An RNA of 177 nucleotides, treated with DMS and 2A3 and read out base by base. The reactions ran in a buffer of 150 mM KOAc, 10 mM MgCl2 and 150 mM bicine (pH 8.5), at 24 C.
[RMDB]
RNA sequence: GGGAACGACUCGAGUAGAGUCGAAAACAGUUAUGUGCGUCCCUCCCGAAGCUGCGCGCUCGGUCGAAGAGGACGACCAUCGCCGAUAGAGGACGACCGGUCUUCGGUCAAGGCAAUAAGAGUAAAACCAGAGAAAGACAUUCGUGUCUUUCUCUGGAAAAGAAACAACAACAACAAC
Reactivity to DMS in 0.01 (KOAc 150mM, MgCl2 10mM, bicine 150mM(pH8.5), 24C), signal-to-noise 3, nucleotides 027 to 126: c060a140g020u000u000a040u000g010u000g020c010g010u000c010c000c000u010c020c010c000g010a040a110g020c020u000g050c190g010c140g020c030u000c040g000g010u000c110g010a100a070g010a090g030g000a030c030g010a030c050c060a060u000c090g000c020c010g000a140u010a140g010a070g010g030a040c080g000a090c060c100g010g000u010c040u010u000c000g010g010u000c070a100a070g000g000c020a130a060u020a060a120g000a100g010u010a080a040a080a200
Reactivity to 2A3 in 0.01 (KOAc 150mM, MgCl2 10mM, bicine 150mM(pH8.5), 24C), signal-to-noise 3, nucleotides 027 to 126: c020a000g080u280u220a060u140g130u130g010c000g020u000c000c000c000u000c000c020c000g040a130a040g000c000u080g040c020g000c030g000c160u000c000g010g030u010c030g040a080a030g070a200g000g010a000c010g000a000c020c000a040u080c050g010c030c000g020a040u080a100g090a030g020g030a020c060g050a070c040c030g090g050u060c060u170u160c060g040g020u010c040a030a040g010g020c000a010a030u200a120a040g090a010g100u140a000a000a020a110